[RMDB]
RNA sequence: GGGAACGACUCGAGUAGAGUCGAAAAAAGUACUGGGAUUUACCAGCAUUAGCCACCAUGCCCAACCAAACAUAAGAAUUUUCUACCAACACUGUCAGAAAGUGGAAUUAGGGUUCUGCAGUGAUCAUAUAGUUCCUACUUUCGAGUAGGAACUAUAAAAAGAAACAACAACAACAAC
Reactivity to 2A3 in 0.01 (KOAc 150mM, MgCl2 10mM, bicine 150mM(pH8.5), 24C), signal-to-noise 3, nucleotides 027 to 126: a010a000g140u070a030c020u020g020g020g130a220u170u130u150a040c000c000a010g010c020a040u050u060a050g030c000c010a010c000c000a060u060g000c020c000c010a040a040c020c040a050a040a070c050a100u180a070a080g070a150a090u100u010u000u040c010u030a060c020c020a080a020c000a010c020u090g110u300c010a020g030a040a070a020g090u090g040g080a050a070u190u060a140g090g070g060u010u010c000u020g030c000a020g010u030g020a060u070c070a010
Reactivity to DMS in 0.01 (KOAc 150mM, MgCl2 10mM, bicine 150mM(pH8.5), 24C), signal-to-noise 4, nucleotides 027 to 126: a050a070g030u010a030c030u000g010g030g000a180u000u000u010a090c030c050a040g000c030a060u010u000a110g020c020c020a050c030c050a100u010g000c010c000c010a060a130c090c060a060a050a110c110a070u010a120a080g060a100a100u000u010u000u000c040u010a170c130c070a070a140c000a020c020u010g000u020c040a020g000a030a040a040g010u000g000g010a100a260u000u000a110g020g010g010u000u000c000u010g000c030a010g010u010g000a100u000c200a120
The record gives the reactivity of an RNA of 177 nucleotides to 2A3 and DMS.
The 2A3 profile rests on 1,857 reads.
It was measured as part of the RMDB library OK2TST.
The reactions ran in a buffer of 150 mM KOAc, 10 mM MgCl2 and 150 mM bicine (pH 8.5), at 24 C.
For DMS the reverse transcriptase was MarathonRT.